[RMDB]
RNA sequence: GGGAACGACUCGAGUAGAGUCGAAAAAUCCUAAUUUUAAUGCCCAUACUGCACACAUCCAAACAACGAGGCAUAAUAUUUCGACCACUAAGUCAAUGCCUAUUCUGAAUACUAGUAGCAGACCUCAUUACACUAACAUGAAUUGGAGGACAACCCGCAACCCUCUAAUCUUCGGAUUAGAGGGUUGAAAAGAAACAACAACAACAAC
Reactivity to DMS in 0.01 (KOAc 150mM, MgCl2 10mM, bicine 150mM(pH8.5), 24C), signal-to-noise 1, nucleotides 027 to 156: a140u000c000c000u010a040a030u000u000u000u000a090a080u010g040c050c010c060a270u000a100c070u000g010c020a120c000a200c090a020u010c020c030a110a110a130c070a060a120c130g030a060g040g040c000a080u000a020a160u010a120u000u020u010c070g010a090c000c010a020c170u000a050a160g030u000c030a170a060u000g010c010c010u000a120u000u000c040u000g010a100a070u000a080c040u000a050g070u000a030g000c010a060g010a060c040c020u000c020a110u000u000a010c040a020c030u000a060a020c050a160u000g010a060a060u000u010g010g030a030g030g000a080c030a000a130c160c000c000g000
Reactivity to 2A3 in 0.01 (KOAc 150mM, MgCl2 10mM, bicine 150mM(pH8.5), 24C), signal-to-noise 3, nucleotides 027 to 156: a000u050c020c000u050a140a130u010u080u040u070a100a050u100g020c030c010c020a030u050a080c040u100g000c020a030c000a010c000a070u040c080c020a030a090a110c060a110a080c080g040a010g000g000c000a040u060a090a060u040a140u030u110u210c060g020a010c040c060a110c200u100a090a030g020u020c030a000a040u010g030c000c000u050a130u090u090c040u030g030a040a000u020a160c040u050a060g040u030a050g010c040a000g010a080c000c020u020c020a030u060u200a010c030a010c070u120a250a020c000a060u040g080a110a040u080u040g010g000a000g110g000a010c000a000a010c040c020c020g010
Structure probing data (DMS and 2A3) for a 207-nucleotide construct. For 2A3, 1,255 sequencing reads were counted. The RNA was probed in 150 mM KOAc, 10 mM MgCl2 and 150 mM bicine (pH 8.5) at 24 C.